[RMDB]
RNA sequence: GGGAACGACUCGAGUAGAGUCGAAAACAGUGAUGCCGGCACCAUGCGUGGGAGCGGACUGCUGCCAUCGCUGCUUCUGCUUCUGUUGGGACUGUGGGGCCUUGCGGCUCUGUGAGGAGUGAUUGGAGAUGCCAGGACGAUUCGUCGUCCUGGCAUCAAAAGAAACAACAACAACAAC
Reactivity to DMS in 0.01 (KOAc 150mM, MgCl2 10mM, bicine 150mM(pH8.5), 24C), signal-to-noise 1, nucleotides 027 to 126: c050a060g010u000g020a070u010g010c180c070g000g000c030a060c030c050a080u010g030c090g000u000g010g010g020a110g030c020g020g060a090c190u000g010c010u000g010c250c070a050u020c090g000c030u000g000c050u020u000c070u010g020c040u010u010c010u000g020u000u000g000g000g030a140c100u010g000u010g000g010g010g000c020c020u010u010g000c150g020g000c010u000c010u000g000u000g010a080g000g000a080g000u000g010a150u000u020g010g010a300
This 177-nucleotide RNA was probed chemically with DMS. For DMS the reverse transcriptase was MarathonRT.